[RMDB]
RNA sequence: GGGAACGACUCGAGUAGAGUCGAAAAUUGAUCGGCACCAGUCGCGCCAACGCAGCCAACAUGCUCUCAGUGCACGCGAUGCAGAUCAAAUACCUGGUGGACGAACGCGGAGUCAACCGCGAAUUGGAUGCCUAUCCUGCUUCGGCAGGAUAGGCAUAAAAGAAACAACAACAACAAC
Reactivity to DMS in 0.01 (KOAc 150mM, MgCl2 10mM, bicine 150mM(pH8.5), 24C), signal-to-noise 1, nucleotides 027 to 126: u000u080g030a000u000c000g000g000c000a040c070c100a030g080u000c010g000c140g000c000c000a030a110c100g040c190a020g010c120c300a100a010c300a110u000g010c030u080c060u010c300a050g000u030g040c050a080c000g010c100g020a010u000g100c010a050g000a090u000c070a040a010a090u000a000c000c000u000g000g000u040g000g000a160c140g000a050a210c000g000c000g040g000a100g000u000c300a080a120c000c000g020c020g020a060a050u010u030g000g000
Reactivity to 2A3 in 0.01 (KOAc 150mM, MgCl2 10mM, bicine 150mM(pH8.5), 24C), signal-to-noise 2, nucleotides 027 to 126: u100u050g000a030u040c000g000g010c070a000c080c120a090g000u010c000g000c010g000c080c020a190a000c120g000c030a010g060c090c040a000a110c060a130u300g000c000u000c000u000c120a000g050u030g140c020a010c170g000c040g100a100u150g000c000a030g000a070u000c020a000a020a020u180a090c020c000u020g020g000u130g100g100a070c100g030a120a000c010g000c000g040g000a040g100u010c040a080a040c000c000g000c000g000a000a090u020u000g040g070

Chemical mapping of a 177-nucleotide RNA with DMS and 2A3. For DMS, 896 sequencing reads were counted. Reactivities are given for positions 27 through 126. The reactions ran in a buffer of 150 mM KOAc, 10 mM MgCl2 and 150 mM bicine (pH 8.5), at 24 C.